Chemical mapping of a 177-nucleotide RNA with DMS. The reactions ran in a buffer of 150 mM KOAc, 10 mM MgCl2 and 150 mM bicine (pH 8.5), at 24 C.
[RMDB]
RNA sequence: GGGAACGACUCGAGUAGAGUCGAAAAGAUAUGGAGUUACGCAUGGAAGUCGUGCUAGAGAGGUUCCUCGGAAACGAGGAACUACCCACCUCUAGAACUACACGUCACCAUGCGUAACUCCUAAGUCCAAGGAAGAUGUGUUCGCACAUCUUCCUUGAAAAGAAACAACAACAACAAC
Reactivity to DMS in 0.01 (KOAc 150mM, MgCl2 10mM, bicine 150mM(pH8.5), 24C), signal-to-noise 4, nucleotides 027 to 126: g000a070u010a300u000g010g000a010g020u000u000a000c000g010c010a000u010g000g010a240a100g030u010c050g030u010g000c000u000a010g000a010g000a160g010g000u000u000c000c000u000c000g020g000a070a060a220c020g010a000g000g000a000a010c010u010a000c020c070c100a300c120c000u000c000u000a010g000a070a050c150u000a300c010a030c040g010u010c110a300c010c010a000u000g000c020g000u000a000a000c000u000c000c000u000a000a060g010u000c020